[RMDB]
Structure probing data (2A3) for a 207-nucleotide construct.
The data come from the RNA Mapping Database (RMDB), library RSTRND.
Conditions: 150 mM KOAc, 10 mM MgCl2 and 150 mM bicine (pH 8.5), 24 C.

RNA sequence: GGGAACGACUCGAGUAGAGUCGAAAAUUUUAGAAUGAAUCUUAGAUUGCAUGUAGAGCUUAGUAACUCUUAAAACUUCUAAACUAUAUUAAGUGCCGAUAAUGGCCAAAUGGCUUUUGCUUAAUUGCUAAAGUCCAUCAUCAGUAGACGUUUCUCAACAAUACCAAUAGUUCGCUAUUGGUAUUGUAAAAGAAACAACAACAACAAC
Reactivity to 2A3 in 0.01 (KOAc 150mM, MgCl2 10mM, bicine 150mM(pH8.5), 24C), signal-to-noise 2, nucleotides 027 to 156: u060u040u030u100a050g070a090a060u060g040a070a040u030c020u050u050a060g040a110u080u120g060c040a020u090g040u210a040g000a010g000c000u000u010a030g000u220a300a300c020u040c000u070u150a010a020a000a000c000u020u000c000u010a040a060a070c020u000a050u070a040u300u040a190a000g030u000g050c040c000g150a240u150a270a120u230g000g000c000c000a020a190a000u000g000g000c050u000u020u000u000g000c010u000u060a060a030u300u040g000c020u020a000a010a000g010u100c030c030a010u070c000a010u030c020a020g120u110a060g020a100c100g000u000u000u000c000u000c020a000